[RMDB]
Chemical mapping of a 207-nucleotide RNA with 2A3. 2A3 adducts were read by reverse transcription with SuperScript II with manganese. It was measured as part of the RMDB library M2RFPK. The reactions ran in a buffer of 150 mM KOAc, 10 mM MgCl2 and 150 mM bicine (pH 8.5), at 24 C.

RNA sequence: GGGAACGACUCGAGUAGAGUCGAAAAAGUGAGUAUGGCUCGUUACGACGAGCCAUACUCACAACGGUUUUCCUAAAUCGUCGUGAGACGGACCUUGGAAAACCUAGUAUUUAAAUAACAAGGUCAAAUUAGCCUAGAUCCUUCGGGAUCUAGGCAAGAACACAAGGAUGUUCGCAUCCUUGUGUUCAAAAGAAACAACAACAACAAC
Reactivity to 2A3 in 0.01 (KOAc 150mM, MgCl2 10mM, bicine 150mM(pH8.5), 24C), signal-to-noise 2, nucleotides 027 to 156: a000g010u010g000a010g010u000a010u000g000g000c000u010c010g040u000u120a100c300g010a000c000g030a060g000c000c000a000u000a000c010u000c000a000c000a000a010c030g000g000u000u000u000u000c000c000u000a000a000a010u080c000g000u000c020g010u030g160a110g000a050c010g000g000a000c000c000u020u030g010g010a000a000a000a010c000c000u000a000g010u000a040u060u220u130a110a260a150u190a050a050c120a030a000g000g000u010c000a000a040a040u180u220a010g000c000c000u000a010g000a000u010c000c010u050u110c230g050g000g010a000u030c000u000a000g000g000c030a000a000